This 207-nucleotide RNA was probed chemically with 2A3. Source: RMDB library OK3TST, as collected in RNAgym. Conditions: 150 mM KOAc, 10 mM MgCl2 and 150 mM bicine (pH 8.5), 24 C. 2A3 adducts were read by reverse transcription with SuperScript II with manganese.

RNA sequence: GGGAACGACUCGAGUAGAGUCGAAAACGUACGGGCGGAUGGGAAAGCAUGCUCCGUUGGAGAACUCCAUCCGAAACGUACGAUCAGCUGGAUGGGAAAGCAUGCGGAUGGGAAAGCAUGCAAGGCUAUGAGCAUGCGAAAGGAUGGGACACGUACGGUGUCUCGGUAAGUUCGCUUACCGAGACACAAAAGAAACAACAACAACAAC
Reactivity to 2A3 in 0.01 (KOAc 150mM, MgCl2 10mM, bicine 150mM(pH8.5), 24C), signal-to-noise 1, nucleotides 027 to 156: c000g000u000a000c000g020g050g040c010g000g000a010u000g000g020g010a260a120a010g110c090a070u250g010c000u010c010c030g270u130u270g020g000a000g000a010a030c000u020c000c000a000u000c000c000g000a010a030a000c000g000u000a000c000g000a120u090c080a020g000c000u040g000g030a070u010g000g000g080a110a080a040g010c010a000u040g010c000g050g000a060u060g080g010g000a000a090a000g000c000a000u000g000c020a000a050g090g090c040u060a030u090g000a020g000c050a030u090g010c030g000a120a000a000g040g030a010u060g000g000g040a000c020a020c050g130u200a090c090g080